RNA sequence: GGGAACGACUCGAGUAGAGUCGAAAACCCAAAGCGUUCGCGCUUUGGGAAAGAAUAAACGAGCGAAAAGAAUGAUGUGGACGCUCGUAAAAACCACAUCUAAAAGUCAACGGUUCGCCGUUGACAACAACGCUUGAAUGUUCGCAUUCAAGCGUUGAAAAGAAACAACAACAACAAC
Reactivity to 2A3 in 0.01 (KOAc 150mM, MgCl2 10mM, bicine 150mM(pH8.5), 24C), signal-to-noise 2, nucleotides 027 to 126: c010c010c000a000a010a000g000c000g020u060u120c180g000c000g000c040u000u000u010g010g000g020a050a100a060g040a030a110u260a200a160a030c030g000a010g000c060g100a050a140a080a040g140a050a230u160g030a010u020g010u010g040g020a070c120g010c030u040c040g000u060a040a040a000a000a000c010c000a000c000a010u000c020u060a010a080a050a020g000u000c010a010a000c010g000g070u010u060c190g000c070c000g000u000u000g010a000c000a010a000
Reactivity to DMS in 0.01 (KOAc 150mM, MgCl2 10mM, bicine 150mM(pH8.5), 24C), signal-to-noise 1, nucleotides 027 to 126: c000c000c000a000a010a000g020c010g030u000u010c250g000c010g100c020u000u000u020g000g000g010a020a020a020g010a180a090u020a020a140a140c120g000a010g010c000g010a140a140a200a110g000a140a130u080g000a030u000g020u000g000g000a290c090g010c000u000c010g020u010a000a010a140a060a070c000c010a020c010a010u000c020u010a030a070a100a180g000u030c000a000a000c010g000g000u000u010c110g010c000c000g010u000u000g030a000c000a140a190